[RMDB]
Structure probing data (2A3) for a 177-nucleotide construct.
RNA sequence: GGGAACGACUCGAGUAGAGUCGAAAAGAUGAGAACAUACUGUUCAGUUGGGCCAUCAGGUGACACUCCAACUCUUGCAGGAGGUCACGAGCAAGAGAAAGAGGACGGCCUGACUUAACAAAAGAAACGCAGCCUAUACGUUCGCGUAUAGGCUGCGAAAAGAAACAACAACAACAAC
Reactivity to 2A3 in 0.01 (KOAc 150mM, MgCl2 10mM, bicine 150mM(pH8.5), 24C), signal-to-noise 1, nucleotides 027 to 126: g150a150u300g030a000g080a040a000c060a050u190a160c030u020g000u000u010c000a000g000u000u000g000g000g000c000c000a070u130c070a110g090g000u080g140a010c000a000c090u000c000c000a000a160c040u000c060u290u080g030c130a000g140g000a070g000g050u030c020a070c090g020a020g000c160a140a000g010a000g000a130a000a000g070a000g150g150a000c100g010g010c000c000u000g000a000c000u000u000a000a000c000a000a010a000a020g230a000a030a000
For 2A3 the reverse transcriptase was SuperScript II with manganese.
The data come from the RNA Mapping Database (RMDB), library OK1LIB.
Reactivities are given for positions 27 through 126.
As a SHAPE reagent, 2A3 marks flexible, mostly unpaired nucleotides at the ribose 2'-OH.